[RMDB]
RNA sequence: GGGAACGACUCGAGUAGAGUCGAAAACUGCAAUGUUUCAGGACCCACAGGAGCGACCCAGAAAGUUACCACAGUUAUGCACAGAGCUGCAAACAACUAUACAUGAUAUAAUAUUAGAAUGUGUGUACAAGGCAAGAUUGUUCGCAAUCUUGCCUUGAAAAGAAACAACAACAACAAC
Reactivity to DMS in 0.01 (KOAc 150mM, MgCl2 10mM, bicine 150mM(pH8.5), 24C), signal-to-noise 2, nucleotides 027 to 126: c060u040g020c060a080a050u020g030u000u000u000c040a110g030g000a140c000c000c000a150c090a050g000g000a020g000c010g000a050c020c000c010a090g010a050a040a090g020u060u010a100c040c050a040c110a040g030u000u000a070u000g060c070a080c050a140g000a110g000c080u000g000c030a030a080a010c140a000a140c210u060a040u010a040c070a000u030g000a190u030a020u010a050a270u020a090u060u040a070g000a150a050u030g050u000g010u000g010u060a080
Reactivity to 2A3 in 0.01 (KOAc 150mM, MgCl2 10mM, bicine 150mM(pH8.5), 24C), signal-to-noise 3, nucleotides 027 to 126: c020u060g000c030a130a070u190g080u000u030u060c130a110g030g000a110c000c020c010a120c060a030g030g050a040g040c000g000a030c010c020c000a010g090a020a080a000g050u060u060a060c020c000a010c010a000g040u070u080a090u120g040c000a000c030a070g150a040g070c090u080g000c000a020a020a020c000a030a080c030u020a080u140a150c050a080u070g200a050u080a000u100a090a120u120a080u200u010a080g050a070a100u030g000u000g000u000g000u000a010